[RMDB]
RNA sequence: GGGAACGACUCGAGUAGAGUCGAAAAGGCUGUCGUAGACGACCAAGACAGCCACUGUUGUCGGGUUUUUACCUUUUGCUCUUUUGAGCGACGACAGACGAUCCUCGGUCGUCUAUAGGAUCGGAAAGGGUUGCAGGUUGUUCGCAACCUGUGACCCAAAAGAAACAACAACAACAAC
Reactivity to 2A3 in 0.01 (KOAc 150mM, MgCl2 10mM, bicine 150mM(pH8.5), 24C), signal-to-noise 3, nucleotides 027 to 126: g000g000c000u020g010u010c010g020u020a010g000a010c000g000a000c000c000a000a020g000a000c000a000g000c000c000a000c000u010g000u000u000g000u000c020g000g000g010u040u000u010u110u220a020c010c000u030u000u000u000g000c000u000c000u010u150u080u300g000a000g000c000g010a000c000g000a000c000a000g010a000c050g030a050u030c000c000u000c010g000g000u000c000g000u000c000u000a000u010a000g000g020a040u050c020g000g000a120a050a010
Reactivity to DMS in 0.01 (KOAc 150mM, MgCl2 10mM, bicine 150mM(pH8.5), 24C), signal-to-noise 6, nucleotides 027 to 126: g010g010c000u000g000u000c020g010u010a050g000a010c010g000a020c010c010a120a140g000a010c010a000g020c000c010a140c010u000g010u000u000g000u000c020g000g010g000u000u030u030u020u040a030c020c000u000u030u000u000g020c000u000c000u020u020u020u040g010a000g010c010g010a020c000g000a010c010a000g000a090c170g000a080u000c020c000u000c270g010g010u000c010g000u000c000u000a070u030a090g020g000a140u020c020g000g010a110a100a090